[RMDB]
RNA sequence: GGGAACGACUCGAGUAGAGUCGAAAAGAUAUGGACCUCUCGGAGAAGGACAACAGCAGAGAUCGGAAACGAUCUCUGACAUGUCCGUAACGAGAGGGUCCUAAGUCAAAAGGGAGGUUCGCCUCCCGCUUCUACUGUCCUUCGGGACAGUAGAAGCAAAAGAAACAACAACAACAAC
Reactivity to DMS in 0.01 (KOAc 150mM, MgCl2 10mM, bicine 150mM(pH8.5), 24C), signal-to-noise 3, nucleotides 027 to 126: g000a010u000a300u020g010g010a300c000c000u000c000u000c020g030g000a130g030a260a280g010g000a010c000a080a090c300a170g000c000a000g010a000g000a010u010c000g000g000a130a100a250c000g000a010u010c000u000c000u010g000a010c070a140u000g000u000c000c010g000u000a090a230c000g000a040g010a020g000g000g010u010c000c000u010a060a150g000u000c050a060a090a150a150g010g000g000a000g000g000u000u010c290g020c000c000u000c000c000c000
Reactivity to 2A3 in 0.01 (KOAc 150mM, MgCl2 10mM, bicine 150mM(pH8.5), 24C), signal-to-noise 1, nucleotides 027 to 126: g010a010u090a060u280g010g000a000c000c000u000c000u000c000g050g000a030g020a040a010g010g000a000c010a200a020c030a160g120c010a010g020a000g000a000u020c010g060g000a030a060a040c030g000a000u010c000u000c000u010g010a020c010a020u130g000u000c000c010g000u000a000a010c000g010a020g000a020g010g000g000u000c000c000u010a090a060g060u000c080a090a000a100a130g010g010g000a020g030g000u040u220c260g170c030c030u000c000c000c000
The data come from the RNA Mapping Database (RMDB), library TTRDES. This 177-nucleotide RNA was probed chemically with DMS and 2A3. The 2A3 profile rests on 3,497 reads. Conditions: 150 mM KOAc, 10 mM MgCl2 and 150 mM bicine (pH 8.5), 24 C. For DMS the reverse transcriptase was MarathonRT. The DMS profile rests on 1,709 reads.